The record gives the reactivity of an RNA of 207 nucleotides to 2A3 and DMS. The reactions ran in a buffer of 150 mM KOAc, 10 mM MgCl2 and 150 mM bicine (pH 8.5), at 24 C. The data come from the RNA Mapping Database (RMDB), library ARCHII. 2A3 is a SHAPE reagent: it acylates the 2'-hydroxyl of flexible nucleotides of all four kinds. For 2A3 the reverse transcriptase was SuperScript II with manganese.
RNA sequence: GGGAACGACUCGAGUAGAGUCGAAAAAAGUAGCGUAGGUUUAUCUCUGUUUUGGAGCCGAUCUUUUUGCCAUAUCUACUAACAAAAAAGGUCGUUAUUUCGUAGGUUGCGCUUUUUUGUGUCAUCAAAAAAGCAAAGAUAAGACUGCUUGCCUGCAGUAGUUAUAGGAGUUCGCUCCUAUAACUACAAAAGAAACAACAACAACAAC
Reactivity to 2A3 in 0.01 (KOAc 150mM, MgCl2 10mM, bicine 150mM(pH8.5), 24C), signal-to-noise 2, nucleotides 027 to 156: a000a040g080u060a030g040c120g050u050a090g030g070u140u120u050a170u100c080u010c030u050g180u180u170u150u190g060g010a000g010c040c000g020a010u000c000u000u020u000u020u030g030c010c010a010u000a010u050c020u020a010c020u030a080a040c020a010a080a000a010a010a000g020g020u000c030g030u040u080a120u050u230u100c030g000u010a000g000g000u010u030g020c020g010c010u060u000u000u000u010u000g050u030g110u080c060a130u050c000a090a000a000a010a030a000g010c000a010a000a010g090a030u090a050a020g060a040c010u030g010c000u050u060g040c000c010u020g000c000a000
Reactivity to DMS in 0.01 (KOAc 150mM, MgCl2 10mM, bicine 150mM(pH8.5), 24C), signal-to-noise 1, nucleotides 027 to 156: a060a100g020u000a010g020c070g000u010a050g040g000u000u000u000a050u010c020u000c050u000g020u010u000u000u000g020g030a110g020c200c020g010a010u010c000u000u000u000u010u000g000c020c050a160u000a070u000c070u000a090c040u000a280a070c010a010a010a000a030a030a030g000g040u000c010g020u000u010a030u000u030u000c060g000u000a050g010g010u000u010g020c110g020c020u010u010u000u010u000u010g010u000g010u000c150a100u010c000a000a000a000a020a010a050g020c010a030a040a080g010a120u000a070a090g000a080c030u010g010c040u000u000g030c020c010u020g020c060a190